Source: RMDB library M2PK90, as collected in RNAgym. An RNA of 177 nucleotides, treated with 2A3 and DMS and read out base by base. The reactions ran in a buffer of 150 mM KOAc, 10 mM MgCl2 and 150 mM bicine (pH 8.5), at 24 C. For DMS, 1,777 sequencing reads were counted.
[RMDB]
RNA sequence: GGGAACGACUCGAGUAGAGUCGAAAAUAAAAGAGCGUACGACUCACAAAGACUGUACGACAGUCUGACUCUCUCGUACGCUUGUUCAACGAGAGAGAGAGUGCGUUGGAACAAGUGUCAAAAAAAACUUGUCUAAGAUCUUCGGAUCUUAGACAAGAAAAGAAACAACAACAACAAC
Reactivity to 2A3 in 0.01 (KOAc 150mM, MgCl2 10mM, bicine 150mM(pH8.5), 24C), signal-to-noise 1, nucleotides 027 to 126: u140a030a160a000a050g040a000g040c060g040u050a000c000g120a100c070u050c070a020c040a010a030a000g010a000c010u010g020u150a120c220g210a080c170a000g000u000c000u010g030a070c030u000c000u000c000u000c030g000u050a020c080g020c000u000u060g010u010u040c010a000a000c040g000a000g010a010g000a010g000a010g000a010g050u090g010c030g000u030u110g100g010a100a020c030a080a120g030u070g080u140c070a000a020a000a000a000a000a080a190
Reactivity to DMS in 0.01 (KOAc 150mM, MgCl2 10mM, bicine 150mM(pH8.5), 24C), signal-to-noise 3, nucleotides 027 to 126: u010a110a110a150a100g010a040g010c040g030u000a060c020g010a080c070u000c060a070c110a130a110a010g010a020c000u000g010u000a090c260g020a090c060a010g020u000c000u000g000a260c080u000c000u010c010u000c010g020u000a050c050g010c050u010u000g000u000u000c070a060a030c060g020a050g010a070g000a010g000a110g000a130g000u000g010c070g000u000u010g010g000a030a030c090a040a070g000u020g030u000c070a010a000a010a080a060a030a050a090